[RMDB]
RNA sequence: GGGAACGACUCGAGUAGAGUCGAAAAGCAAAGAAAUUUUAUCCCAAUAAGGCGAUGUAAGCAAGUCGACCCAACGCGAGGGCGCUAGCGAGCUUACGAGCCCUAGCAGAAUAAUCGCGAGAAAAAAUCGGUAUACCUUGUUCGCAAGGUAUACCGAAAAAGAAACAACAACAACAAC
Reactivity to 2A3 in 0.01 (KOAc 150mM, MgCl2 10mM, bicine 150mM(pH8.5), 24C), signal-to-noise 1, nucleotides 027 to 126: g000c010a030a140a080g140a040a180a100u100u130u140u010a110u100c020c000c000a000a070u140a040a020g000g020c030g020a010u020g180u110a090a090g000c100a090a000g010u090c000g110a300c010c010c000a110a000c040g000c020g070a040g040g030g000c140g010c010u000a010g020c040g080a060g030c000u000u000a060c140g050a000g000c000c000c010u010a000g000c020a020g090a250a000u170a150a070u040c010g000c040g010a000g110a020a020a000a000a010a000
Reactivity to DMS in 0.01 (KOAc 150mM, MgCl2 10mM, bicine 150mM(pH8.5), 24C), signal-to-noise 1, nucleotides 027 to 126: g010c230a020a050a110g010a000a000a130u000u020u000u000a090u000c000c000c000a090a200u010a110a050g000g020c080g000a030u000g000u000a110a040g070c040a070a090g010u000c000g000a130c000c000c060a100a200c020g020c040g030a010g000g000g000c160g000c060u000a020g010c110g000a190g070c020u030u030a030c080g000a050g000c000c010c000u010a020g000c020a100g020a070a080u000a070a080u000c050g030c000g020a220g010a000a010a010a020a090a150
Chemical mapping of a 177-nucleotide RNA with 2A3 and DMS. The 2A3 profile rests on 671 reads. Reactivities are given for positions 27 through 126. The RNA was probed in 150 mM KOAc, 10 mM MgCl2 and 150 mM bicine (pH 8.5) at 24 C. Values are in units of 0.01, from 0 to 300, in steps of 10.